[RMDB]
RNA sequence: GGGAACGACUCGAGUAGAGUCGAAAAGAUAUGGACUUUCGAGCGAAUCGCGAAGAACGUGGAGGUAGAUACAUCGGAAACGAUGUAUCCGAAUGCCACGGGAGCGACGCUCGAAAGUCCUAAGUCAGAUAAGUAGAUCGUUCGCGAUCUACUUAUCAAAAGAAACAACAACAACAAC
Reactivity to DMS in 0.01 (KOAc 150mM, MgCl2 10mM, bicine 150mM(pH8.5), 24C), signal-to-noise 3, nucleotides 027 to 126: g000a110u000a300u010g000g010a010c010u000u000u000c020g030a020g000c020g010a220a120u000c000g020c020g030a130a180g020a120a210c020g010u000g000g010a040g000g000u020a080g010a010u000a010c000a010u000c010g010g000a160a110a200c000g010a010u000g000u000a000u000c010c010g000a100a110u050g010c020c010a000c000g000g000g000a050g020c010g000a120c040g010c000u000c000g000a000a000a010g000u000c000c000u000a000a020g010u000c060a190

An RNA of 177 nucleotides, treated with DMS and read out base by base. The reactions ran in a buffer of 150 mM KOAc, 10 mM MgCl2 and 150 mM bicine (pH 8.5), at 24 C. The data come from the RNA Mapping Database (RMDB), library TTRINS. For DMS the reverse transcriptase was MarathonRT. For DMS, 3,067 sequencing reads were counted. Values cover nucleotides 27 to 126.